[RMDB]
RNA sequence: GGGAACGACUCGAGUAGAGUCGAAAACUCAACUGUCCUCGAGUGAGGUAGAGUCGUGUUAUUGCGUCACCACGACAGCAUCAGUUUGAGGAAAAUUUGAUAAAAGGGCCGUUGUUCGCAACGGCCCCUUAUGAGGUUUGUUCGCAAACCUCAUAAGAAAAGAAACAACAACAACAAC
Reactivity to DMS in 0.01 (KOAc 150mM, MgCl2 10mM, bicine 150mM(pH8.5), 24C), signal-to-noise 2, nucleotides 027 to 126: c030u010c000a090a070c190u000g000u000c010c000u000c020g010a040g000u000g000a020g000g040u000a040g020a100g000u000c020g020u010g000u000u020a060u010u010g000c110g000u010c090a150c240c010a020c040g010a020c010a070g000c070a070u000c020a020g000u000u010u010g010a020g020g000a020a070a080a090u000u010u010g000a140u000a070a060a110a090g010g000g020c000c010g010u000u000g010u000u010c170g020c010a000a000c010g000g000c000c000c000
Reactivity to 2A3 in 0.01 (KOAc 150mM, MgCl2 10mM, bicine 150mM(pH8.5), 24C), signal-to-noise 3, nucleotides 027 to 126: c000u000c030a030a020c040u100g080u080c010c010u040c010g080a090g090u130g040a010g000g030u110a090g050a060g160u000c030g000u020g050u060u080a110u090u260g130c080g110u080c040a010c050c000a000c010g000a000c020a030g040c010a070u060c000a020g130u050u080u110g020a010g070g020a010a050a030a040u130u060u080g070a080u100a110a160a010a030g000g000g010c010c000g030u010u010g010u060u070c160g000c120a000a000c010g010g040c000c010c000

Source information: Structure probing data (DMS and 2A3) for a 177-nucleotide construct. The DMS profile rests on 1,624 reads. The RNA was probed in 150 mM KOAc, 10 mM MgCl2 and 150 mM bicine (pH 8.5) at 24 C. It was measured as part of the RMDB library RFMREP. Values cover nucleotides 27 to 126.